An RNA of 207 nucleotides, treated with 2A3 and DMS and read out base by base.
DMS adducts were read by reverse transcription with MarathonRT.
The DMS profile rests on 3,983 reads.
Conditions: 150 mM KOAc, 10 mM MgCl2 and 150 mM bicine (pH 8.5), 24 C.
High DMS reactivity at an A or C suggests that its Watson-Crick edge is free.
The 2A3 profile rests on 12,163 reads.
RNA sequence: GGGAACGACUCGAGUAGAGUCGAAAAGGGGUCCUUCGUAGUAGAUCUUGGAUUUAGAAUCGAGGGAUGCUGAAGCCUCCACGGCAUCCUCCCCACCGAUUCUUGUCAGAUCGAAACGAAGGACGGAGGCACCCAAAGUCAUAGUUCGCUAUGACAACUUCUCUAGAAUGUUCGCAUUCUAGAGAAGAAAAGAAACAACAACAACAAC
Reactivity to 2A3 in 0.01 (KOAc 150mM, MgCl2 10mM, bicine 150mM(pH8.5), 24C), signal-to-noise 6, nucleotides 027 to 156: g060g000g020g010u000c010c010u000u000c010g040u010a140g080u010a010g020a020u040c060u130u300g130g010a050u250u210u140a020g000a000a000u010c000g000a050g000g010g000a000u000g000c010u040g040a070a030g010c000c010u000c020c020a020c010g000g000c000a010u010c000c020u030c050c030c000c000a020c020c010g000a000u000u000c000u000u010g030u020c050a050g020a120u010c000g000a030a000a010c000g010a000a000g000g000a000c000g000g000a000g000g020c010a040c010c020c000a070a090a010g000u000c000a000u000a010g020u060u110c210g010c100u000a000u010g000a000c000a010a020
Reactivity to DMS in 0.01 (KOAc 150mM, MgCl2 10mM, bicine 150mM(pH8.5), 24C), signal-to-noise 3, nucleotides 027 to 156: g000g020g040g000u000c000c000u000u010c010g010u010a130g020u000a230g010a030u000c040u000u010g010g020a090u000u020u000a090g000a040a060u000c020g030a300g010g000g020a010u000g020c020u010g040a050a150g020c000c030u000c020c050a300c050g010g010c010a020u010c010c030u000c290c130c030c030a300c180c010g000a030u000u010c000u000u020g020u000c070a100g000a020u000c030g000a150a150a150c000g000a040a000g000g030a030c000g010g000a030g060g030c070a110c020c000c000a060a100a160g000u000c000a020u000a020g020u000u000c300g020c030u000a030u000g020a020c020a040a190